[RMDB]
Chemical mapping of a 177-nucleotide RNA with 2A3 and DMS.
The RNA was probed in 150 mM KOAc, 10 mM MgCl2 and 150 mM bicine (pH 8.5) at 24 C.
Reactivities are given for positions 27 through 126.
For DMS the reverse transcriptase was MarathonRT.
RNA sequence: GGGAACGACUCGAGUAGAGUCGAAAAAGGAGUGCUAACAGUGACUUUUGGUACGCUGUGUAUAUGCAGAAAAAGAUAUUAGACACCAAUUAAGCCGGGACGAAAGCCUAAUUGGAUUGCUUUCGUCGAAACAAGUAUUCUUCGGAAUACUUGUUUCAAAAGAAACAACAACAACAAC
Reactivity to 2A3 in 0.01 (KOAc 150mM, MgCl2 10mM, bicine 150mM(pH8.5), 24C), signal-to-noise 7, nucleotides 027 to 126: a010g120g010a080g010u070g030c010u030a030a020c020a040g020u010g080a100c020u040u110u120u200g060g020u070a070c020g000c020u010g010u010g070u060a030u020a030u300g030c040a030g140a070a120a010a010a000g100a010u100a050u080u050a040g020a030c010a010c030c000a000a040u070u010a040a010g040c030c040g070g050g010a010c010g010a010a000a000g000c010c040u110a150a130u150u140g110g030a100u070u100g000c000u000u010u000c010g010u000c030
Reactivity to DMS in 0.01 (KOAc 150mM, MgCl2 10mM, bicine 150mM(pH8.5), 24C), signal-to-noise 8, nucleotides 027 to 126: a090g000g010a100g020u000g020c020u000a060a050c120a070g010u000g010a100c040u000u000u000u000g010g020u000a120c170g020c010u000g010u000g000u000a080u010a070u010g010c030a060g010a050a050a070a090a080g010a110u000a050u010u000a050g010a120c070a080c020c020a040a090u010u010a060a080g020c030c040g020g010g010a030c040g010a010a030a020g010c010c200u010a050a110u010u010g010g000a220u010u000g010c020u000u000u000c010g010u000c040

Record summary: 2A3 adducts were read by reverse transcription with SuperScript II with manganese. It was measured as part of the RMDB library RFMREP.